[RMDB]
Chemical mapping of a 177-nucleotide RNA with 2A3 and DMS. Conditions: 150 mM KOAc, 10 mM MgCl2 and 150 mM bicine (pH 8.5), 24 C. Reactivities are given for positions 27 through 126. The data come from the RNA Mapping Database (RMDB), library OK1LIB. The DMS profile rests on 7,636 reads.

RNA sequence: GGGAACGACUCGAGUAGAGUCGAAAAUAUGUAGAGGUACACAGGCCGCUAUCGCCGGAAGAAGAGCAAAACGUGCAGACAAUGCCCUAUGUGUUGCCUGCGGAAUUUACCGCGUUCAGAAACGCGCCCUGCUAAUGGGUUUCGACCCAUUAGCAGGAAAAGAAACAACAACAACAAC
Reactivity to 2A3 in 0.01 (KOAc 150mM, MgCl2 10mM, bicine 150mM(pH8.5), 24C), signal-to-noise 7, nucleotides 027 to 126: u280a100u120g060u080a050g020a040g040g040u060a040c060a010c020a060g050g050c030c000g010c020u030a050u120c050g040c050c050g040g010a040a020g070a030a010g030a010g040c050a050a070a040a020c080g090u150g040c020a000g010a060c030a020a030u080g020c000c010c050u150a120u180g030u010g010u020u050g020c000c020u020g000c010g060g080a090a090u140u140u120a120c030c020g000c010g000u000u060c140a080g140a060a120a000c000g000c000g010c010
Reactivity to DMS in 0.01 (KOAc 150mM, MgCl2 10mM, bicine 150mM(pH8.5), 24C), signal-to-noise 4, nucleotides 027 to 126: u020a100u020g030u010a040g020a100g000g030u010a070c090a090c120a080g000g010c020c050g000c040u020a070u010c100g010c010c020g000g010a080a100g000a060a090g020a090g000c070a070a030a070a090c170g000u030g000c010a040g000a050c070a020a030u000g010c010c140c130u020a080u030g010u000g010u000u000g000c040c000u000g000c010g010g010a090a060u020u020u040a110c140c060g000c020g040u010u000c150a150g030a040a070a050c010g000c040g010c260